[RMDB]
RNA sequence: GGGAACGACUCGAGUAGAGUCGAAAACGCGCGAGGUCGUCCGGCACGCGGGUCAGCACUGCUUUCAGGUUGUCUGCCAUGGCUUCGAUAUCCUCGAUGUGGUACCGCGAACGAUCAAAAUUGAUUAGAUUACGUAUCACUUCGGUGAUACGUAAUCAAAAGAAACAACAACAACAAC
Reactivity to DMS in 0.01 (KOAc 150mM, MgCl2 10mM, bicine 150mM(pH8.5), 24C), signal-to-noise 3, nucleotides 027 to 126: c090g030c080g030c020g000a110g000g010u000c050g010u010c040c060g010g020c060a050c090g010c050g000g020g000u010c070a060g000c070a080c070u010g020c220u000u020u020c130a070g000g010u000u000g000u000c040u000g020c050c060a100u010g020g010c040u010u000c050g010a070u000a100u020c030c030u000c070g000a100u000g030u010g010g000u010a080c040c010g010c090g020a050a070c080g000a040u010c060a030a070a080a100u000u000g000a100u020u000a110
Reactivity to 2A3 in 0.01 (KOAc 150mM, MgCl2 10mM, bicine 150mM(pH8.5), 24C), signal-to-noise 3, nucleotides 027 to 126: c030g000c020g010c040g040a060g000g030u030c020g020u050c060c040g010g010c050a030c050g020c050g000g000g070u110c030a010g000c050a030c070u050g060c040u050u220u260c030a060g040g020u070u020g040u030c040u040g040c010c010a070u100g030g000c000u040u040c070g030a050u020a070u110c010c010u020c030g010a040u110g040u040g090g010u040a030c000c000g010c010g060a060a030c080g020a040u040c010a030a060a100a180u130u170g040a080u060u090a050